[RMDB]
The record gives the reactivity of an RNA of 177 nucleotides to 2A3 and DMS.
The RNA was probed in 150 mM KOAc, 10 mM MgCl2 and 150 mM bicine (pH 8.5) at 24 C.
Source: RMDB library OK2TST, as collected in RNAgym.
RNA sequence: GGGAACGACUCGAGUAGAGUCGAAAAUGGCCAGAUUAAGAGAGCAAGCACGUGCUGAUUCGUUGAGUGCCCUCCAAUGAACUAGGCCCCGACCAACGUACUGUACUUGCGGAAAAUACUUACCAAGCGGAUGGGUAAAAUUCGUUUUACCCAUCCGAAAAGAAACAACAACAACAAC
Reactivity to 2A3 in 0.01 (KOAc 150mM, MgCl2 10mM, bicine 150mM(pH8.5), 24C), signal-to-noise 1, nucleotides 027 to 126: u090g010g000c010c000a030g030a000u080u000a210a000g030a000g010a020g040c020a030a010g040c030a010c030g040u040g050c210u070g080a170u090u110c010g030u100u050g030a040g080u030g000c000c000c000u000c030c000a030a070u060g020a030a000c000u040a070g040g020c010c000c000c000g050a060c030c010a000a000c020g030u050a040c040u110g030u070a070c020u060u050g000c000g050g000a030a030a020a030u070a020c020u020u000a070c000c010a000a030g010
Reactivity to DMS in 0.01 (KOAc 150mM, MgCl2 10mM, bicine 150mM(pH8.5), 24C), signal-to-noise 2, nucleotides 027 to 126: u020g010g020c010c060a070g000a090u000u010a140a120g020a090g040a050g000c020a000a050g020c010a050c050g010u020g010c110u000g000a190u000u000c030g010u010u010g020a070g030u000g000c050c020c010u000c020c080a130a040u010g000a050a030c060u010a090g020g000c030c000c040c060g010a090c050c090a020a090c080g040u010a020c050u010g040u010a010c030u000u000g000c080g000g000a040a060a060a040u020a070c140u000u000a040c070c080a070a160g030
High 2A3 reactivity points to a flexible backbone, as in loops and unpaired stretches. The 2A3 profile rests on 1,331 reads. For DMS the reverse transcriptase was MarathonRT.